[RMDB]
RNA sequence: GGGAACGACUCGAGUAGAGUCGAAAAUUUUAAUGUUGUUAAACAAGGCCAUUUUAUUGGUGUUGAGGGUGAACUACCUGUAGCUGUAGUCAAUGAUAAGAUCUUCACCAAGAGUGGCGUUAAUGACGAACAGAUAGCUUCGGCUAUCUGAAAAGAAACAACAACAACAAC
Reactivity to DMS in 0.01 (KOAc 150mM, MgCl2 10mM, bicine 150mM(pH8.5), 24C), signal-to-noise 4, nucleotides 027 to 129: u000u070u080u060a010a050u030g040u000u000g030u000u000a060a060a050c200a170a110g000g050c030c010a000u000u000u000u000a110u000u010g000g030u030g020u000u050g030a030g020g030g050u000g030a020a040c000u050a050c000c000u010g040u040a020g030c140u050g000u020a030g030u000c080a110a090u000g040a120u060a100a060g030a090u000c010u040u000c000a000c040c030a000a000g020a070g000u000g030g050c020g020u000u000a020a090u020g010a080c160g060a060a170
Reactivity to 2A3 in 0.01 (KOAc 150mM, MgCl2 10mM, bicine 150mM(pH8.5), 24C), signal-to-noise 4, nucleotides 027 to 129: u140u120u090u160a050a110u060g000u000u000g010u000u070a100a020a060c140a080a130g120g000c000c000a020u000u000u070u190a270u000u050g000g000u010g010u000u000g000a020g070g080g110u060g010a110a000c030u000a010c000c070u210g190u220a040g020c130u070g000u010a000g010u010c000a070a110u080g100a080u090a080a090g050a100u020c000u000u000c000a000c030c000a000a000g040a000g000u000g000g020c040g010u010u030a010a010u050g050a010c020g040a030a000

Chemical mapping of a 170-nucleotide RNA with DMS and 2A3. Values are in units of 0.01, from 0 to 300, in steps of 10. Conditions: 150 mM KOAc, 10 mM MgCl2 and 150 mM bicine (pH 8.5), 24 C. For 2A3 the reverse transcriptase was SuperScript II with manganese. Values cover nucleotides 27 to 129. Source: RMDB library 15KLIB, as collected in RNAgym. For DMS the reverse transcriptase was MarathonRT.